[RMDB]
RNA sequence: GGGAACGACUCGAGUAGAGUCGAAAAGCUUGAACAAUGAGGUUCAUCCUUCCCACUUAGGGAUUUGCCAAGACAACCUGCUCAGGUUAGCCAAUUGUAAGCGAGUGAGUGCGAGAGAGACUUGGAGAUACCUCCAUGCGUUCGCGCAUGGAGGUAUAAAAGAAACAACAACAACAAC
Reactivity to DMS in 0.01 (KOAc 150mM, MgCl2 10mM, bicine 150mM(pH8.5), 24C), signal-to-noise 1, nucleotides 027 to 126: g030c030u010u000g000a030a020c000a140a200u010g020a240g000g000u010u000c010a070u010c060c020u000u000c010c000c050a200c190u010u000a060g000g030g000a090u010u010u040g010c020c040a060a050g000a120c100a050a050c020c000u000g020c110u010c010a060g000g010u000u000a160g000c060c050a040a150u000u000g020u010a130a100g000c030g010a230g020u000g000a130g000u000g000c120g000a090g000a090g000a150g000a030c060u000u010g000g010a150g000
Reactivity to 2A3 in 0.01 (KOAc 150mM, MgCl2 10mM, bicine 150mM(pH8.5), 24C), signal-to-noise 1, nucleotides 027 to 126: g020c010u010u070g020a000a000c060a080a260u300g110a110g270g000u050u060c000a030u050c030c020u030u080c010c000c000a070c030u010u160a100g060g000g040a090u000u030u270g070c010c000a040a000g000a060c080a030a050c010c070u030g030c030u010c030a030g010g040u050u070a030g000c000c090a090a020u120u130g140u090a110a100g030c030g030a040g060u030g050a010g030u090g020c120g010a040g010a010g050a030g010a060c030u010u010g020g000a070g010